This 207-nucleotide RNA was probed chemically with 2A3.
2A3 adducts were read by reverse transcription with SuperScript II with manganese.
Conditions: 150 mM KOAc, 10 mM MgCl2 and 150 mM bicine (pH 8.5), 24 C.

RNA sequence: GGGAACGACUCGAGUAGAGUCGAAAAUUUCCUCUGCAUCAUGUAGCUACGUCCAUCCGAUGAACGUCCACCCCGGGAGUCAGAACUAGUCCUUUCAAUCCUUUUGCGAGAAUCUCAAAGUCUUUAUUGCCCUUUCUUUCUGCCUUGGGGAGGGUGAUCUCAACAGUACGUUCGCGUACUGUUGAGAAAAAGAAACAACAACAACAAC
Reactivity to 2A3 in 0.01 (KOAc 150mM, MgCl2 10mM, bicine 150mM(pH8.5), 24C), signal-to-noise 1, nucleotides 027 to 156: u040u010u000c020c010u020c020u020g030c030a090u110c010a080u090g030u090a010g030c050u040a020c040g070u000c020c020a100u000c040c040g070a080u020g070a060a030c060g020u000c010c010a060c000c000c000c000g000g000g000a030g020u090c020a050g020a050a010c040u020a040g080u040c010c000u040u140u000c110a170a110u090c000c010u050u140u040u090g000c050g020a030g070a010a110u030c010u000c090a100a120a080g100u000c050u070u160u040a150u080u120g000c040c000c000u000u060u000c000u010u110u010c040u090g120c000c020u010u150g000g010g010g000a010g000g050g010u020g050a040